RNA sequence: GGGAACGACUCGAGUAGAGUCGAAAAGCAGUGGCGGAGGUGGCCAGACAGUACACCGAUAACGGUAUGCCCAACUUCAUGGGUGGUGAAAAAGAGUUCCAUAUCUAAUGAAAGGUCUUCUCUAGGCCCUGAGCAUGUAUUUCGAUACAUGCUCAGGAAAAGAAACAACAACAACAAC
Reactivity to DMS in 0.01 (KOAc 150mM, MgCl2 10mM, bicine 150mM(pH8.5), 24C), signal-to-noise 3, nucleotides 027 to 126: g010c100a090g040u010g010g040c060g020g000a100g020g010u000g000g020c080c040a070g010a100c110a090g020u010a070c080a030c030c020g000a120u000a080a070c120g020g010u000a060u010g020c000c020c010a060a190c160u010u000c160a050u000g010g000g020u010g020g000u010g000a080a040a060a110a090g000a090g020u000u010c010c010a020u000a030u000c040u010a090a080u000g010a070a070a090g010g010u000c010u000u000c060u000c060u000a080g000g000c050
Reactivity to 2A3 in 0.01 (KOAc 150mM, MgCl2 10mM, bicine 150mM(pH8.5), 24C), signal-to-noise 2, nucleotides 027 to 126: g010c010a010g040u040g050g000c070g000g030a040g070g000u040g030g000c030c040a060g040a030c020a000g050u080a010c010a020c040c020g020a040u090a200a070c080g000g000u100a050u140g030c000c000c000a030a060c030u180u150c050a100u040g040g000g030u050g040g050u150g100a120a050a020a000a030g060a010g060u070u000c000c000a040u040a000u030c020u070a120a080u140g090a050a110a020g080g000u030c000u120u040c010u050c020u040a040g140g030c060
Structure probing data (DMS and 2A3) for a 177-nucleotide construct. The RNA was probed in 150 mM KOAc, 10 mM MgCl2 and 150 mM bicine (pH 8.5) at 24 C.